Structure probing data (2A3) for a 207-nucleotide construct. For 2A3, 495 sequencing reads were counted.
RNA sequence: GGGAACGACUCGAGUAGAGUCGAAAAUAACUCUUGUACCGUAUAAGUUUUCGGUUAACGUCAUAGUAGCCGUCCCUGCUACGUUGAUCGCAAUCUCAUUUGCUCCUAACUUCUCGUUACUAUACUUUAACCAUGAUGUGAAAAUCUUCAUUAAAGCGUAGCACGUGCUUUUCGAAGCACGUGCUACAAAAGAAACAACAACAACAAC
Reactivity to 2A3 in 0.01 (KOAc 150mM, MgCl2 10mM, bicine 150mM(pH8.5), 24C), signal-to-noise 1, nucleotides 027 to 156: u110a030a010c060u030c020u090u090g130u110a020c000c000g000u050a010u050a180a160g070u010u000u010u220c020g080g000u070u180a100a020c060g010u010c070a040u000a100g000u000a000g040c030c010g040u010c000c000c030u030g000c000u070a030c040g050u010u010g040a030u070c050g010c070a030a100u010c090u000c120a280u030u060u110g020c000u000c000c000u010a060a050c000u020u300c090u010c010g060u010u030a050c050u130a070u070a050c030u200u120u080a100a040c050c000a040u040g030a020u030g030u000g130a000a000a000a090u000c010u000u000c000a140u090u160a200a200a000g060c080
The data come from the RNA Mapping Database (RMDB), library OK3TST. For 2A3 the reverse transcriptase was SuperScript II with manganese.